[RMDB]
RNA sequence: GGGAACGACUCGAGUAGAGUCGAAAAAGGGCCGCCGUGUCAAACGGACACGAUGGUGCCGAAGAACACCGGGAUUUUUCCGUUUUCUCCCGGUGGCCAACGAAAUGGCAGCCGAGCUUCUUACCCAUCCAUUUAUAUAGUUCGCUAUAUAAAUGGAAAAAGAAACAACAACAACAAC
Reactivity to 2A3 in 0.01 (KOAc 150mM, MgCl2 10mM, bicine 150mM(pH8.5), 24C), signal-to-noise 5, nucleotides 027 to 126: a020g010g000g000c000c000g000c010c020g020u000g000u000c010a150a230a160c190g140g000a010c000a000c010g010a010u030g000g020u070g200c000c010g010a030a010g060a050a010c000a000c000c000g010g030g000a030u060u050u040u100u100c060c030g030u070u030u080u050c040u010c010c010c000g000g000u000g000g010c010c010a060a040c050g100a080a040a100u130g010g000c010a000g030c030c040g020a020g020c010u070u010c010u030u070a070c010c000c010a030
Reactivity to DMS in 0.01 (KOAc 150mM, MgCl2 10mM, bicine 150mM(pH8.5), 24C), signal-to-noise 6, nucleotides 027 to 126: a190g010g000g000c000c000g030c040c000g010u000g010u000c020a120a110a130c290g010g000a020c040a010c000g000a020u000g010g020u000g010c010c000g010a070a070g000a110a170c010a010c000c010g000g000g000a030u000u010u010u000u010c080c060g000u000u000u000u000c170u000c000c000c000g010g010u000g000g000c030c030a060a090c090g010a050a100a090u010g000g010c010a100g010c060c030g010a090g000c060u000u000c030u000u000a120c010c010c030a210